[RMDB]
RNA sequence: GGGAACGACUCGAGUAGAGUCGAAAAUUACAGAAGACAAGGGUUAAGUAAUUCUGGAUAUAACUUAGCCGUCGUAACACGUGUAAUCAACGGCAAAGCAACUUUGGCUGUGGUCCAGAAGCUGCAGCAAAAUCACUGAGUUCGCUCAGUGAUUUUGAAAAGAAACAACAACAACAAC
Reactivity to DMS in 0.01 (KOAc 150mM, MgCl2 10mM, bicine 150mM(pH8.5), 24C), signal-to-noise 4, nucleotides 027 to 126: u000u000a040c030a100g000a170a110g000a060c050a110a110g000g000g020u000u000a010a030g010u000a130a170u000u000c090u000g000g000a080u010a080u010a110a040c010u000u000a010g020c000c000g010u000c090g010u020a050a070c170a120c190g000u000g000u010a050a050u000c070a060a060c060g010g000c080a060a040a090g000c090a060a030c130u010u000u010g010g020c020u000g010u000g010g010u000c000c010a010g010a020a050g000c040u000g000c010a040g020
Reactivity to 2A3 in 0.01 (KOAc 150mM, MgCl2 10mM, bicine 150mM(pH8.5), 24C), signal-to-noise 2, nucleotides 027 to 126: u040u010a010c000a020g130a150a030g050a070c040a050a080g190g000g020u040u050a020a000g000u010a030a080u050u020c020u030g000g020a010u040a010u030a220a020c000u000u000a000g000c000c030g060u050c030g060u030a090a020c100a020c120g050u060g000u080a050a030u090c040a040a040c030g070g020c060a100a080a000g020c020a040a090c040u060u100u090g040g030c000u010g000u030g040g000u020c000c010a010g020a020a010g010c010u050g010c000a010g000
Conditions: 150 mM KOAc, 10 mM MgCl2 and 150 mM bicine (pH 8.5), 24 C. The record gives the reactivity of an RNA of 177 nucleotides to DMS and 2A3.